Overview
This 177-nucleotide RNA was probed chemically with DMS and 2A3. The DMS profile rests on 1,593 reads. Source: RMDB library RFM100, as collected in RNAgym.
[RMDB]
RNA sequence: GGGAACGACUCGAGUAGAGUCGAAAACCCGGACGUGGUUUUUUAGAACCUACUGCUGCAGUUAAAACGACCGUAUCACCGUAACGAAUUAAUGCUGCCCCACUUGCUUGUUUUGCUAAUUGACCUAACGUUCAAGUCAUUUCGAUGACUUGAACGUAAAAGAAACAACAACAACAAC
Reactivity to DMS in 0.01 (KOAc 150mM, MgCl2 10mM, bicine 150mM(pH8.5), 24C), signal-to-noise 1, nucleotides 027 to 126: c010c000c000g000g000a030c040g030u000g060g000u000u000u000u020u050u000a120g000a060a120c020c000u000a080c090u000g000c030u000g030c020a080g000u010u020a000a050a130a130c100g000a070c010c060g000u020a100u050c010a040c050c060g000u010a040a110c110g040a000a060u100u000a050a050u000g000c110u000g000c040c050c000c020a100c140u070u000g030c060u000u000g000u000u000u010u010g000c050u000a100a090u050u000g010a180c040c020u000a050
Reactivity to 2A3 in 0.01 (KOAc 150mM, MgCl2 10mM, bicine 150mM(pH8.5), 24C), signal-to-noise 1, nucleotides 027 to 126: c020c000c000g000g010a060c080g060u060g060g060u030u000u000u020u100u060a110g020a080a020c010c010u010a040c030u070g000c020u010g010c040a030g000u100u050a050a010a010a080c080g030a030c030c000g010u030a030u150c000a010c020c010g020u050a080a000c060g030a070a020u140u150a000a090u160g020c000u040g000c010c010c000c000a060c040u030u070g000c010u090u060g030u030u020u040u010g000c020u000a030a180u060u070g010a020c000c010u000a050